Structure probing data (DMS and 2A3) for a 177-nucleotide construct. The data come from the RNA Mapping Database (RMDB), library OK1LIB. The 2A3 profile rests on 48,234 reads. DMS adducts were read by reverse transcription with MarathonRT. Reactivities are rounded to 0.1 and cut off at 0 and 3.
RNA sequence: GGGAACGACUCGAGUAGAGUCGAAAAGGUAGAUGAUACGACUCAUUAGCCAUCAGCACCGGAUGGUAGUCGCUGGCUAGGCAUCUACCACACUAUGAUUGCUUCGGACUUGCGAGCACCGUUAGUGACACCACUAGAUAUUCGUAUCUAGUGGUGUAAAAGAAACAACAACAACAAC
Reactivity to DMS in 0.01 (KOAc 150mM, MgCl2 10mM, bicine 150mM(pH8.5), 24C), signal-to-noise 9, nucleotides 027 to 126: g000g020u010a000g000a010u010g010a090u030a110c130g000a080c050u010c210a110u030u020a060g010c010c000a010u010c000a090g010c060a070c030c020g020g020a080u050g010g020u000a050g010u010c060g010c140u000g000g010c020u010a030g000g010c010a010u010c010u000a010c000c000a250c060a040c030u010a020u010g000a100u010u010g000c010u010u020c030g000g010a160c160u020u020g000c050g010a040g000c030a060c170c050g010u000u010a030g010u010g000
Reactivity to 2A3 in 0.01 (KOAc 150mM, MgCl2 10mM, bicine 150mM(pH8.5), 24C), signal-to-noise 9, nucleotides 027 to 126: g010g000u000a010g000a010u020g010a030u080a180c070g040a050c060u050c090a160u110u160a020g010c000c000a010u020c030a020g100c040a040c030c030g090g080a080u190g030g020u040a070g040u040c030g000c080u030g040g020c040u040a040g080g060c000a000u000c000u010a000c000c010a010c000a000c000u070a070u130g070a180u070u110g020c030u070u130c030g170g050a300c100u100u190g050c070g020a010g010c010a020c020c020g070u030u050a020g010u020g030